[RMDB]
RNA sequence: GGGAACGACUCGAGUAGAGUCGAAAAACAGUGUUUGUAGGCCAGACCCAAGUCACCUGGUCUGAUUCAUCAGACCUGGGGGCCACGUUUCCUCCACAGAGAGGCCGAGCAUGGCCCAAGCUGUCAGGAUCCCGGGCAUGUGGGACCCAUCCAGGGACUAUAAUAGGGAUUUCGAUCCCUAUUAUAGAAAAGAAACAACAACAACAAC
Reactivity to DMS in 0.01 (KOAc 150mM, MgCl2 10mM, bicine 150mM(pH8.5), 24C), signal-to-noise 1, nucleotides 027 to 156: a050c040a100g010u000g020u000u020u000g010u010a070g020g000c010c020a100g000a120c030c030c030a060a160g000u000c040a110c000c020u010g000g010u000c010u020g010a080u000u010c170a130u000c030a030g000a050c010c010u000g010g000g010g050g000c020c020a060c100g020u000u010u010c020c010u020c000c020a220c000a220g020a200g000a070g000g000c140c000g020a140g030c060a090u010g010g090c010c020c010a030a300g010c020u010g030u010c020a150g020g000a120u010c000c000c010g060g000g020c110a110u020g020u000g020g020g000a060c000c010c010a130u000c060c050a060g070g000g000a220
Reactivity to 2A3 in 0.01 (KOAc 150mM, MgCl2 10mM, bicine 150mM(pH8.5), 24C), signal-to-noise 2, nucleotides 027 to 156: a000c040a030g000u030g020u110u190u110g090u140a050g020g000c020c030a010g000a100c020c020c040a060a000g020u040c030a010c080c010u000g020g020u020c010u010g020a050u180u300c160a220u020c000a130g020a020c010c010u000g000g000g000g000g050c000c000a010c000g000u000u020u040c010c000u050c030c020a090c100a100g090a010g010a030g180g070c060c180g010a020g000c030a030u030g000g000c000c000c000a030a030g030c010u060g040u030c060a100g030g030a060u000c010c020c050g000g000g000c080a060u070g040u060g150g010g030a050c020c010c000a020u090c030c030a030g030g010g090a010
Chemical mapping of a 207-nucleotide RNA with DMS and 2A3. Values are in units of 0.01, from 0 to 300, in steps of 10. The reactions ran in a buffer of 150 mM KOAc, 10 mM MgCl2 and 150 mM bicine (pH 8.5), at 24 C. For 2A3, 1,007 sequencing reads were counted. It was measured as part of the RMDB library OK3TST. For DMS, 2,578 sequencing reads were counted.